[RMDB]
RNA sequence: GGGAACGACUCGAGUAGAGUCGAAAAAACGAAUGCUCCUAGGAAGAUCUAGACAACUUCAAUGAUAAUUUCGAUGACAACGAAAACCGGAUCCUUCAAUACCUUGACCUCCUCAUUGCUGUGGAGAACUUGAGAUCAGGUUCGCCUGAUCUCAAGUAAAAGAAACAACAACAACAAC
Reactivity to 2A3 in 0.01 (KOAc 150mM, MgCl2 10mM, bicine 150mM(pH8.5), 24C), signal-to-noise 1, nucleotides 027 to 126: a030a000c060g010a090a000u040g050c010u060c010c000u040a060g040g060a050a120g010a080u070c030u070a030g030a120c040a090a040c090u050u050c040a040a220u100g080a040u070a150a120u080u070u060c020g040a020u120g040a010c010a020a020c070g010a000a000a060a000c040c010g040g000a050u000c040c000u000u030c000a080a090u050a110c030c040u010u030g030a040c010c000u010c000c030u000c040a030u070u290g030c040u040g000u040g020g000a030g020a010
Reactivity to DMS in 0.01 (KOAc 150mM, MgCl2 10mM, bicine 150mM(pH8.5), 24C), signal-to-noise 2, nucleotides 027 to 126: a060a010c110g000a120a040u000g010c070u000c030c000u010a140g000g000a060a040g000a060u010c050u020a120g000a090c120a060a050c070u000u000c010a070a130u000g010a040u010a110a110u000u000u000c010g010a080u000g020a150c220a050a050c060g010a020a030a080a040c170c040g000g010a020u000c050c000u000u010c060a100a080u010a070c060c050u000u000g020a070c100c030u000c030c010u000c050a090u000u010g010c160u010g000u010g000g000a120g000a030

An RNA of 177 nucleotides, treated with 2A3 and DMS and read out base by base. For DMS, 1,176 sequencing reads were counted. The RNA was probed in 150 mM KOAc, 10 mM MgCl2 and 150 mM bicine (pH 8.5) at 24 C. It was measured as part of the RMDB library OK2TST. The 2A3 profile rests on 1,232 reads.